[RMDB]
The record gives the reactivity of an RNA of 177 nucleotides to 2A3 and DMS. It was measured as part of the RMDB library M2PK90. For DMS the reverse transcriptase was MarathonRT. For DMS, 1,266 sequencing reads were counted. Reactivities are rounded to 0.1 and cut off at 0 and 3. Conditions: 150 mM KOAc, 10 mM MgCl2 and 150 mM bicine (pH 8.5), 24 C.
RNA sequence: GGGAACGACUCGAGUAGAGUCGAAAAAAUUAAGUGAAUUAAAAUAAACAUGAAGAUCAAGAACAAGAUACAAACGGCAAGUAUCGUUCGAUCCAUGAAAUAAAUAAUAUCACUAAGCCGAAUAUAAUUACAUAUUGAGAUUCGUCUCAAUAUGUAAAAAAGAAACAACAACAACAAC
Reactivity to 2A3 in 0.01 (KOAc 150mM, MgCl2 10mM, bicine 150mM(pH8.5), 24C), signal-to-noise 1, nucleotides 027 to 126: a000a010u210u130a030a010g000u000g000a000a000u010u070a030a070a050a070u000a000a000a000c000a010u030g080a100a080g000a000u040c030a120a020g010a020a020c050a070a130g000a010u010a060c030a040a210a000c010g290g000c060a130a090g000u000a000u000c020g000u000u000c020g000a000u040c000c020a000u030g090a300a300a000u030a020a020a000u030a020a020u030a030u030c000a000c050u010a030a030g040c000c000g050a030a000u200a000u040a230a090
Reactivity to DMS in 0.01 (KOAc 150mM, MgCl2 10mM, bicine 150mM(pH8.5), 24C), signal-to-noise 1, nucleotides 027 to 126: a060a080u000u000a080a040g030u000g000a030a030u000u000a020a010a080a090u000a100a100a000c000a000u000g000a160a100g020a010u010c040a170a150g020a000a010c020a120a120g020a010u000a000c010a070a080a110c160g010g000c160a070a100g000u000a000u000c020g020u010u000c020g000a010u000c000c020a000u020g000a000a100a030u000a040a110a040u020a000a010u000a140u010c000a000c000u000a050a060g000c000c020g000a090a130u000a060u000a090a080